[RMDB]
RNA sequence: GGGAACGACUCGAGUAGAGUCGAAAAUGCAAAUUAAUUCAACAAUAUACCUCUUAUUUAAUUAGUAAAAAGCUUAAUAAUAGCCUUCUGAUAAGCAAAUGUUGCAUUUUAGAGGUGAUAUUAUGGCCUAAAUUUUACUAUUCGUAGUAAAAUUUAGAAAAGAAACAACAACAACAAC
Reactivity to DMS in 0.01 (KOAc 150mM, MgCl2 10mM, bicine 150mM(pH8.5), 24C), signal-to-noise 2, nucleotides 027 to 126: u020g020c080a040a080a100u010u000a040a080u010u020c040a080a100c020a070a060u020a100u010a020c060c000u000c010u000u000a070u030u000u070a070a170u030u020a160g000u020a050a080a070a140a250g020c000u000u040a010a010u030a040a060u010a230g010c010c000u000u010c070u000g000a030u000a020a080g020c060a020a120a100u030g000u030u000g020c000a030u010u010u030u000a020g010a030g000g010u000g010a050u000a010u010u010a020u000g010g020c100
Reactivity to 2A3 in 0.01 (KOAc 150mM, MgCl2 10mM, bicine 150mM(pH8.5), 24C), signal-to-noise 4, nucleotides 027 to 126: u110g010c000a000a050a190u080u120a050a110u150u280c070a090a060c000a050a010u060a000u040a120c020c000u000c020u070u070a170u080u180u140a210a200u060u090a050g050u150a070a110a120a080a000g000c000u100u040a070a000u100a160a030u010a220g030c000c030u070u120c020u080g030a070u060a110a040g010c010a030a110a120u250g070u170u070g040c070a100u010u010u000u080a010g000a000g000g000u030g030a010u010a000u060u030a050u090g010g000c020